[RMDB]
RNA sequence: GGGAACGACUCGAGUAGAGUCGAAAAUUGAGUAAGUUUUGAAGGCUUUUCAUCUUCGCCAUAGAUGGUAAAUGGGCGGAUAAACAUGGUGGGAAUUUUGUACUGGUAAGCUGCACCACGAGCGAGCAUGGCUGUCGCCGCCUUGGUCGCCUCGUACCUUAUCGGAGUGAUUCGUCACUCCGAUAAGAAAAGAAACAACAACAACAAC
Reactivity to DMS in 0.01 (KOAc 150mM, MgCl2 10mM, bicine 150mM(pH8.5), 24C), signal-to-noise 1, nucleotides 027 to 156: u000u000g000a100g000u010a090a070g030u000u000u000u000g010a130a130g020g040c020u010u000u030u020c000a110u000c060u000u000c090g010c050c050a160u000a080g010a080u020g020g000u000a020a060a080u010g010g000g040c040g000g010a110u000a030a040a100c040a050u010g010g040u030g000g010g010a090a110u000u010u000u010g010u000a010c070u030g030g040u000a040a090g010c040u000g050c050a120c060c050a070c020g010a040g010c030g020a070g010c030a100u000g030g020c000u000g010u000c100g040c090c070g040c010c030u000u010g030g010u000c010g000c040c000u000c020g010u010a090c080
Reactivity to 2A3 in 0.01 (KOAc 150mM, MgCl2 10mM, bicine 150mM(pH8.5), 24C), signal-to-noise 4, nucleotides 027 to 156: u090u060g020a020g050u070a100a050g000u050u070u100u180g120a110a040g080g000c030u090u090u070u090c020a050u010c010u080u090c030g000c010c000a030u050a050g080a060u080g060g040u140a070a050a090u080g020g020g030c030g020g000a030u070a040a090a010c060a050u030g020g040u020g030g030g050a040a030u080u160u070u100g050u050a060c040u030g000g020u010a040a030g020c050u050g010c070a030c070c010a000c050g000a010g010c010g000a010g030c000a010u020g010g000c020u050g080u210c050g010c100c030g010c030c000u030u010g130g000u000c000g010c030c020u000c000g020u040a060c000